RNA sequence: GGGAACGACUCGAGUAGAGUCGAAAACAAUUAACGGCACCUCGUAGGUGGUGCCGAACCUGCGUGAGCUACUAACACGCUACGAGCAGUCUGGUAUGACUGCAAACAAUUAGUAGAAUGGAUGAAAAUAUAUCGAGCUGUUCGCAGCUCGAUAUAUAAAAGAAACAACAACAACAAC
Reactivity to DMS in 0.01 (KOAc 150mM, MgCl2 10mM, bicine 150mM(pH8.5), 24C), signal-to-noise 2, nucleotides 027 to 126: c270a110a090u050u000a090a230c030g000g040c010a010c000c000u020c010g000u030a110g000g040u010g020g010u020g000c010c010g010a020a020c010c030u020g000c000g000u010g010a180g000c000u000a010c010u000a030a010c010a040c030g010c020u000a060c270g000a230g000c000a030g000u010c000u020g010g030u080a110u030g010a000c020u000g000c030a050a020a030c090a040a050u000u000a010g020u000a000g000a300a100u050g020g010a060u010g000a020a030a070
Reactivity to 2A3 in 0.01 (KOAc 150mM, MgCl2 10mM, bicine 150mM(pH8.5), 24C), signal-to-noise 4, nucleotides 027 to 126: c080a020a150u190u130a130a110c010g000g020c000a000c010c010u040c010g150u180a080g020g300u020g040g000u000g040c000c000g010a000a030c000c010u000g010c000g020u000g000a030g040c000u000a000c000u000a030a000c000a000c030g020c060u080a030c050g050a010g000c010a000g000u000c010u160g170g030u300a100u300g000a000c000u000g020c000a000a000a000c010a010a090u010u010a010g000u000a000g040a060a090u130g100g080a070u090g090a070a040a030
Structure probing data (DMS and 2A3) for a 177-nucleotide construct. The DMS profile rests on 3,677 reads. It was measured as part of the RMDB library OK1LIB. 2A3 adducts were read by reverse transcription with SuperScript II with manganese. Conditions: 150 mM KOAc, 10 mM MgCl2 and 150 mM bicine (pH 8.5), 24 C. Values are in units of 0.01, from 0 to 300, in steps of 10. For 2A3, 2,548 sequencing reads were counted.